[RMDB]
Chemical mapping of a 177-nucleotide RNA with DMS and 2A3. Conditions: 150 mM KOAc, 10 mM MgCl2 and 150 mM bicine (pH 8.5), 24 C. For DMS, 4,409 sequencing reads were counted. Reactivities are given for positions 27 through 126. For 2A3, 4,331 sequencing reads were counted.
RNA sequence: GGGAACGACUCGAGUAGAGUCGAAAACUCAAGGAUUGUGGCAUUGACUUUGUUCAGUUCCAUGAACCAGAUUGGGAUUAUGGCUUCACUGCCUUUGCAAGUGCUCCAGUAACUGCUGAACAGCGUACAAUUCCCGAUAGUUCGCUAUCGGGAAUUGAAAAGAAACAACAACAACAAC
Reactivity to DMS in 0.01 (KOAc 150mM, MgCl2 10mM, bicine 150mM(pH8.5), 24C), signal-to-noise 4, nucleotides 027 to 126: c020u000c020a110a100g000g010a110u000u000g020u000g000g010c060a020u000u010g010a030c030u010u010u000g010u010u000c010a010g020u000u000c000c010a020u000g000a030a050c040c030a140g010a300u000u000g020g020g010a140u000u000a060u000g020g000c160u000u000c080a060c060u000g000c070c070u000u010u020g010c060a040a070g010u000g000c080u000c040c010a040g010u010a080a110c090u000g020c040u000g010a070a130c120a050g000c070g010u010a160
Reactivity to 2A3 in 0.01 (KOAc 150mM, MgCl2 10mM, bicine 150mM(pH8.5), 24C), signal-to-noise 4, nucleotides 027 to 126: c000u000c010a010a080g050g020a040u010u060g020u020g000g010c020a000u020u030g030a040c030u140u160u240g060u170u040c020a000g000u040u020c010c000a020u030g010a020a020c000c000a040g080a300u130u150g040g040g030a050u090u070a060u210g030g010c030u050u060c050a040c100u050g020c010c000u020u040u080g030c040a100a020g020u010g040c020u030c010c010a000g020u020a060a070c030u030g000c000u010g030a070a020c040a080g010c020g050u060a050